[RMDB]
RNA sequence: GGGAACGACUCGAGUAGAGUCGAAAAAGACCUGCGUCAUGGUCGCGUUGAGCAGUAGCAACACGAUCAACGCCAUCACGGUCACCGAUAUUCGGCGCAGAGAGGCGUUCAUACGCGUUCGAUGACCCACUGGUCGUAAGUUCGCUUACGACCAGUGAAAAGAAACAACAACAACAAC
Reactivity to 2A3 in 0.01 (KOAc 150mM, MgCl2 10mM, bicine 150mM(pH8.5), 24C), signal-to-noise 9, nucleotides 027 to 126: a010g080a050c010c010u010g000c010g010u010c060a090u060g020g000u020c010g000c000g010u010u010g060a090g040c190a080g080u140a030g080c070a040a040c020a010c110g010a010u020c010a010a030c000g000c020c010a070u100c030a010c070g030g000u060c030a040c050c010g010a020u040a140u220u150c050g020g000c020g000c040a000g060a010g010a040g120g040c030g010u090u130c100a060u140a210c060g000c010g020u050u070c020g030a050u070g030a020c000c010
Reactivity to DMS in 0.01 (KOAc 150mM, MgCl2 10mM, bicine 150mM(pH8.5), 24C), signal-to-noise 4, nucleotides 027 to 126: a100g010a080c050c000u000g010c040g020u000c100a170u010g020g030u010c160g000c010g040u000u000g000a070g000c060a130g030u020a060g010c090a030a050c100a080c040g000a070u020c000a050a050c040g020c000c140a100u000c050a060c190g000g000u030c020a100c030c010g000a090u030a070u020u020c050g020g000c040g000c020a050g000a110g010a090g030g000c020g000u000u000c140a100u050a040c060g000c030g010u000u000c020g010a080u020g000a090c060c040